Chemical mapping of a 207-nucleotide RNA with 2A3. For 2A3, 1,481 sequencing reads were counted. The data come from the RNA Mapping Database (RMDB), library RNAMAK. The RNA was probed in 150 mM KOAc, 10 mM MgCl2 and 150 mM bicine (pH 8.5) at 24 C.

RNA sequence: GGGAACGACUCGAGUAGAGUCGAAAACGGAUGUUCGCAUCCGAAAAAAGGGGUCCAUCGAUCUCAGAAGAGCAUCGAUCUACACUGAAGCCUCCACGGUGUAGGGAGCUCGGAUGAGGGAGGACGGAGGCACCCAAAAAACCCAGUUCGCUGGGAAGUUUAAGCCAAACUUCGGUUUGGCUUAAACAAAAGAAACAACAACAACAAC
Reactivity to 2A3 in 0.01 (KOAc 150mM, MgCl2 10mM, bicine 150mM(pH8.5), 24C), signal-to-noise 2, nucleotides 027 to 156: c010g000g000a000u020g050u120u120c270g010c130a010u000c000c020g100a090a030a000a000a040a030g080g010g000g010u050c040c000a090u300c030g000a000u000c020u010c000a030g010a130a010g000a030g000c000a000u300c030g000a000u000c000u010a000c010a000c000u040g030a130a030g000c010c000u000c020c000a000c020g050g000u000g010u000a000g000g010g010a010g010c000u000c000g020g000a020u000g000a000g000g000g010a010g000g000a010c000g000g000a000g000g030c000a010c000c000c000a060a070a040a010a020a030c000c000c000a000g030u020u080c150g030c070u000g040g010g020a040a010